[RMDB]
RNA sequence: GGGAACGACUCGAGUAGAGUCGAAAAUGACAAGUAUAAGACGAGUGAUGAGCUUUGCGUGAAUCUUAAUUUACCCGCAAAUGUCCCAUACUCUCGUGUUAUUUCCAGGAUGGGCUUUAAACUCGAUAAGGCAACUAGUUCGCUAGUUGCAAAAGAAACAACAACAACAAC
Reactivity to DMS in 0.01 (KOAc 150mM, MgCl2 10mM, bicine 150mM(pH8.5), 24C), signal-to-noise 9, nucleotides 027 to 129: u020g000a110c090a080a090g010u020a030u020a040a030g050a030c030g010a000g000u000g020a050u020g020a070g020c050u030u000u010g010c020g030u030g020a080a070u020c230u000u060a090a080u030u020u020a060c080c070c000g050c010a000a000a010u020g050u100c000c000c000a030u040a110c040u030c010u000c010g010u020g000u030u020a030u010u030u020c060c020a030g040g000a200u030g000g000g040c010u010u010u010a060a070a060c050u000c030g040a040u030a090a090g030
Reactivity to 2A3 in 0.01 (KOAc 150mM, MgCl2 10mM, bicine 150mM(pH8.5), 24C), signal-to-noise 9, nucleotides 027 to 129: u090g030a020c050a070a040g070u040a050u010a040a020g110a010c000g000a000g010u030g010a000u000g000a000g010c010u000u000u000g000c000g010u100g060a050a040u060c080u090u160a140a130u180u110u150a150c020c010c010g000c000a010a020a020u120g130u220c010c020c010a000u110a250c020u010c000u000c010g000u030g040u020u010a020u030u070u010c030c010a000g050g020a040u090g020g010g000c000u040u060u100a090a150a030c010u000c000g020a030u020a080a040g040